RNA sequence: GGGAACGACUCGAGUAGAGUCGAAAAUCUAGUUGAAAUACUAAUAAAUGCAGUAAGAAAACACUAUGUCUAAAAUGUUGAAAUUCUUUGAAAUUCUUUUAAAGCUGAUAGAUUCUUGCAUAGUAGUAGGGCAUGAGGAUUCAACAUUUCUCCCCCAAAACGUACCAUUAUUCGUAAUGGUACGUUUAAAAGAAACAACAACAACAAC
Reactivity to DMS in 0.01 (KOAc 150mM, MgCl2 10mM, bicine 150mM(pH8.5), 24C), signal-to-noise 2, nucleotides 027 to 156: u010c020u000a110g010u000u000g010a150a140a130u010a070c030u000a070a160u000a080a110a070u010g010c040a070g000u010a120a090g000a110a100a140a150c000a040c050u000a090u000g040u020c090u000a080a070a080a080u000g020u010u010g010a110a060a140u000u010c010u020u000u000g020a090a070a180u000u000c060u000u000u000u000a020a090a080g000c150u000g020a160u000a070g000a190u000u000c050u000u000g000c010a060u010a090g020u010a080g010u000a050g000g010g000c090a060u000g020a070g020g010a110u000u000c030a030a060c040a090u010u000u000c040u010c000c000c000c010c040a110
Reactivity to 2A3 in 0.01 (KOAc 150mM, MgCl2 10mM, bicine 150mM(pH8.5), 24C), signal-to-noise 1, nucleotides 027 to 156: u080c030u040a020g000u000u020g010a020a020a040u130a050c030u100a050a050u100a110a160a030u030g030c020a020g070u180a200a030g070a060a130a020a000c020a010c000u090a060u060g020u010c010u070a170a000a050a050u050g010u080u030g010a010a050a110u070u030c020u000u020u020g060a100a120a110u080u110c030u020u260u070u080a050a180a010g010c020u030g060a050u060a040g040a030u030u180c030u020u090g020c000a000u010a120g010u020a020g040u030a040g040g160g000c000a020u040g000a010g050g010a010u000u000c010a000a000c010a000u010u090u000c040u050c010c030c000c000c050a000